[RMDB]
RNA sequence: GGGAACGACUCGAGUAGAGUCGAAAAUUGUGAAACAAGCAGGCGCAGGAAGAGUCAGAGCCUUUGUCUCUAUAUAUUAGACCUCUCUGAUGGCACAUCUCAUUAACAAACACUGGGAUCACCUUUUCCUUUUUGUUUGAAAAAAUUGGGAAAAAUGACCUUCCUUAGGGUUCGCCCUAAGGAAGGUAAAAGAAACAACAACAACAAC
Reactivity to 2A3 in 0.01 (KOAc 150mM, MgCl2 10mM, bicine 150mM(pH8.5), 24C), signal-to-noise 1, nucleotides 027 to 156: u040u090g010u020g080a120a050a060c070a000a090g030c050a020g080g000c030g040c090a000g040g030a030a050g000a050g040u020c050a010g030a030g000c000c000u060u050u090g020u040c070u010c000u010a050u000a050u000a010u290u110a010g010a070c000c000u030c000u000c030u060g030a050u090g020g000c060a010c000a050u000c010u030c020a080u080u080a060a020c020a070a030a000c000a000c020u000g020g000g080a010u030c030a130c150c000u130u080u090u120c010c050u020u020u010u040u170g020u000u050u050g100a090a080a030a030a080a090u100u150g000g020g080a030a070a150a010a050u280g040